[RMDB]
RNA sequence: GGGAACGACUCGAGUAGAGUCGAAAAGAUAUGGAUCAAUCGUAACAAGCGAGGAUCUAUGGAGAUAGCUGUAUACUCGGAAACGAGUAUACCGAAACCAUAGGGAGCUUGGAGAAGAUUGAUCCUAAGUCAAAAGUAUUGCCUUCGGGCAAUACAACUUCUAGAUAUUCUUCGGAAUAUCUAGAAGAAAAGAAACAACAACAACAAC
Reactivity to DMS in 0.01 (KOAc 150mM, MgCl2 10mM, bicine 150mM(pH8.5), 24C), signal-to-noise 1, nucleotides 027 to 156: g000a050u000a210u000g000g000a020u000c000a010a020u000c000g040u000a220a300c010a050a020g020c020g010a160g000g010a030u000c020u030a010u010g000g020a120g000a300u000a160g000c110u000g040u000a010u000a010c000u000c020g010g030a040a100a180c000g020a040g000u000a020u030a000c000c020g020a100a210a210c010c020a010u000a020g010g060g020a050g030c010u000u010g010g000a130g030a140a170g020a020u020u000g010a000u000c000c000u000a000a080g000u000c020a080a110a090a180g000u010a000u000u010g030c000c000u000u030c300g080g000g000c000a000a000u000a010c000a050a110
Reactivity to 2A3 in 0.01 (KOAc 150mM, MgCl2 10mM, bicine 150mM(pH8.5), 24C), signal-to-noise 4, nucleotides 027 to 156: g010a010u040a010u050g000g000a000u000c000a000a000u010c010g050u060a040a090c010a010a000g000c000g030a300g020g000a000u000c000u000a000u010g020g000a170g060a160u200a070g070c040u010g000u000a000u000a000c000u000c010g000g000a020a020a020c000g000a000g000u000a000u000a010c000c000g010a040a000a010c000c000a010u000a000g010g000g010a000g010c000u000u000g030g000a060g140a060a040g000a000u000u000g000a000u000c000c000u000a000a010g000u000c020a020a010a030a200g000u000a000u000u010g000c000c000u020u080c300g050g000g000c010a000a000u000a000c000a000a010